This 177-nucleotide RNA was probed chemically with 2A3 and DMS. The data come from the RNA Mapping Database (RMDB), library OK1LIB. For DMS the reverse transcriptase was MarathonRT. Conditions: 150 mM KOAc, 10 mM MgCl2 and 150 mM bicine (pH 8.5), 24 C. High DMS reactivity at an A or C suggests that its Watson-Crick edge is free.
[RMDB]
RNA sequence: GGGAACGACUCGAGUAGAGUCGAAAAGGCAAGAGAAUCACUUCAACCCAGGAGGCGGAGGUUGUUGCCGUGAGCCAAGAUCACACCACUGCACUCCAGUCUGGGCGACAGAGAGAGACUCCGUCUCUCCCCGAUCGUCAUUCGUGACGAUCGGGGAAAAAGAAACAACAACAACAAC
Reactivity to 2A3 in 0.01 (KOAc 150mM, MgCl2 10mM, bicine 150mM(pH8.5), 24C), signal-to-noise 3, nucleotides 027 to 126: g060g050c070a050a000g040a040g040a070a120u060c020a010c160u060u000c060a040a070c020c000c020a020g070g030a000g040g000c030g030g010a050g130g000u110u090g020u080u030g150c030c020g000u030g020a020g050c000c010a110a020g100a070u170c080a020c000a000c160c000a030c020u030g000c030a010c040u000c030c000a020g010u000c010u050g000g070g030c040g020a020c080a020g180a000g000a000g030a000g100a130c000u030c050c030g000u020c020u000c000
Reactivity to DMS in 0.01 (KOAc 150mM, MgCl2 10mM, bicine 150mM(pH8.5), 24C), signal-to-noise 2, nucleotides 027 to 126: g000g000c000a130a050g010a050g020a130a090u000c100a000c070u000u000c030a300a020c000c010c000a110g000g050a020g010g020c000g030g000a090g050g000u020u050g000u000u000g000c050c010g020u000g030a120g030c010c040a020a120g010a070u010c030a020c000a080c120c000a040c000u010g000c080a090c020u060c000c040a110g030u000c060u020g000g000g000c000g030a040c090a060g040a040g010a150g020a030g020a120c010u050c100c080g010u000c000u000c000